Chemical mapping of a 177-nucleotide RNA with 2A3 and DMS.
For DMS, 2,475 sequencing reads were counted.
The data come from the RNA Mapping Database (RMDB), library OK1LIB.
As a SHAPE reagent, 2A3 marks flexible, mostly unpaired nucleotides at the ribose 2'-OH.
RNA sequence: GGGAACGACUCGAGUAGAGUCGAAAAUGGUAGGUAUCGAUGGUGUCUCAAUUCGGAGCACUACUCAGGAUCUCCAACAUUUCUGCCACACGUGAAAUAGUAGUACUGUGUGGAGACGCCAUCGCAAGGGAAUUACUUACUUCGGUAAGUAAUUCCCAAAAGAAACAACAACAACAAC
Reactivity to 2A3 in 0.01 (KOAc 150mM, MgCl2 10mM, bicine 150mM(pH8.5), 24C), signal-to-noise 4, nucleotides 027 to 126: u160g100g050u110a110g090g050u120a080u180c010g000a000u000g000g010u000g000u000c000u000c020a020a110u100u120c070g020g000a000g050c140a000c040u040a020c040u040c070a030g060g090a130u050c010u040c050c000a040a030c020a080u080u160u090c080u090g080c020c000a060c010a010c090g060u070g070a030a040a120u200a060g090u020a030g040u040a060c030u070g030u030g010u040g180g000a000g000a000c000g000c000c000a010u000c000g000c010a030a150
Reactivity to DMS in 0.01 (KOAc 150mM, MgCl2 10mM, bicine 150mM(pH8.5), 24C), signal-to-noise 2, nucleotides 027 to 126: u050g000g010u020a020g000g010u020a020u020c040g010a030u000g010g020u000g020u030c020u010c050a160a050u000u030c250g000g020a020g000c170a050c040u000a050c020u000c090a060g000g020a130u010c000u010c000c020a100a260c260a060u010u000u010c100u010g020c080c040a010c080a040c030g030u030g000a120a140a100u030a090g000u000a030g030u000a050c230u000g000u000g000u010g000g020a060g000a010c010g000c050c000a000u000c020g000c230a060a030